This 207-nucleotide RNA was probed chemically with 2A3 and DMS. 2A3 adducts were read by reverse transcription with SuperScript II with manganese. Conditions: 150 mM KOAc, 10 mM MgCl2 and 150 mM bicine (pH 8.5), 24 C.
RNA sequence: GGGAACGACUCGAGUAGAGUCGAAAAGGUCAGGCCUGAUCGGAAACAGCAGCAGGUGAGUCCGCCUUAUGUGAAGGAUCGGCUGAAACACGAGGAAAUACUGAGCCAACGCAAGACGGUAGCCGACAAAAUCUAGUUCACUUCGGUGAACUAGAAAGGAAAUAACAUAGUUCGCUAUGUUAUUUCCAAAAGAAACAACAACAACAAC
Reactivity to 2A3 in 0.01 (KOAc 150mM, MgCl2 10mM, bicine 150mM(pH8.5), 24C), signal-to-noise 7, nucleotides 027 to 156: g060g000u040c020a030g000g060c010c030u100g010a070u050c040g060g050a120a080a030c040a050g090c010a000g000c010a010g000g020u040g060a060g060u040c050c030g010c010c020u090u070a130u090g090u030g070a070a030g040g010a050u070c030g010g000c020u020g010a060a080a020c060a010c060g020a040g000g100a070a080a020u130a110c050u060g010a020g030c020c020a020a040c070g010c090a050a050g040a020c020g050g000u060a020g020c010c000g020a030c050a000a110a000a020u010c000u010a000g000u000u000c000a000c000u030u040c190g070g000u000g000a000a000c000u000a000g000a000a000a000
Reactivity to DMS in 0.01 (KOAc 150mM, MgCl2 10mM, bicine 150mM(pH8.5), 24C), signal-to-noise 3, nucleotides 027 to 156: g010g000u010c050a120g010g040c050c040u000g010a080u000c010g010g000a100a060a080c070a190g030c030a080g010c120a070g010g020u000g010a140g010u000c040c020g020c010c000u000u000a060u000g000u000g020a100a180g020g010a080u000c020g020g040c000u010g010a140a080a070c040a130c040g020a090g050g000a060a080a100u010a090c070u000g000a120g000c010c010a050a100c070g010c040a080a130g010a090c050g010g030u010a090g010c030c000g020a100c100a050a040a070a150u000c000u010a010g010u010u000c000a020c000u000u000c300g060g020u000g000a000a000c000u000a000g000a010a070a100
For 2A3, 8,772 sequencing reads were counted. Values cover nucleotides 27 to 156.